[RMDB]
RNA sequence: GGGAACGACUCGAGUAGAGUCGAAAAAGGCAGUAGCAAAGUGAGAAAGAUGGUGGCUAAAUCCUCAUUAGGGGGUGAUGCCUAUGCUUGAAUGUAUAGUUUUACUCCUGGAAAGGAGCUAGACUUGCUCACUUUAGAGGUUCGCCUCUAAAGUGAGAAAAGAAACAACAACAACAAC
Reactivity to DMS in 0.01 (KOAc 150mM, MgCl2 10mM, bicine 150mM(pH8.5), 24C), signal-to-noise 2, nucleotides 027 to 126: a060g020g010c020a030g010u010a030g040c050a060a050a060g030u000g000a110g010a130a030a070g000a080u000g010g020u010g010g030c040u010a150a110a080u000c000c010u000c030a210u020u000a140g010g000g000g000g010u000g000a150u010g010c030c020u010a030u010g000c010u000u010g020a110a050u000g020u000a040u010a000g000u000u000u000u000a070c010u000c000c000u020g010g010a140a160a010g010g000a010g020c070u000a010g010a020c010u000u000g000

Source: RMDB library RFMREP, as collected in RNAgym.
An RNA of 177 nucleotides, treated with DMS and read out base by base.
Values are in units of 0.01, from 0 to 300, in steps of 10.
DMS adducts were read by reverse transcription with MarathonRT.
For DMS, 1,760 sequencing reads were counted.